[RMDB]
RNA sequence: GGGAACGACUCGAGUAGAGUCGAAAAGAUAUGGACCUUAUUAGCUUUUGACGCUCAGAUAUUCGGAAACGAAUAUAUGAGCGAUAAGCUAUAAGGUCCUAAGUCAAAGUCAGGCUUCGGCCUGACACAGAUUUGCUACGUUCGCGUAGCAAAUCUGAAAAGAAACAACAACAACAAC
Reactivity to DMS in 0.01 (KOAc 150mM, MgCl2 10mM, bicine 150mM(pH8.5), 24C), signal-to-noise 1, nucleotides 027 to 126: g020a010u000a300u000g000g000a010c010c000u000u000a010u000u020a000g040c000u000u000u010u000g010a240c180g020c000u000c000a000g000a020u000a000u000u000c020g000g000a070a090a170c000g030a000a030u000a010u000a030u000g000a000g000c010g000a010u000a010a020g010c010u000a010u000a000a000g020g000u000c000c000u030a000a050g010u010c040a200a120a200g000u000c000a000g000g010c000u000u010c290g030g010c000c000u000g010a000c010a040
Reactivity to 2A3 in 0.01 (KOAc 150mM, MgCl2 10mM, bicine 150mM(pH8.5), 24C), signal-to-noise 1, nucleotides 027 to 126: g030a020u030a050u090g020g010a000c000c030u070u000a080u040u300a070g000c020u120u070u110u300g260a190c300g000c000u000c000a010g010a030u010a000u000u000c010g030g000a000a070a050c000g000a020a000u010a000u000a030u000g000a010g000c020g010a000u010a000a000g020c000u020a010u000a000a000g000g000u040c000c000u010a010a010g000u000c050a020a020a020g000u000c000a020g010g000c000u100u170c300g230g000c010c000u010g000a010c010a000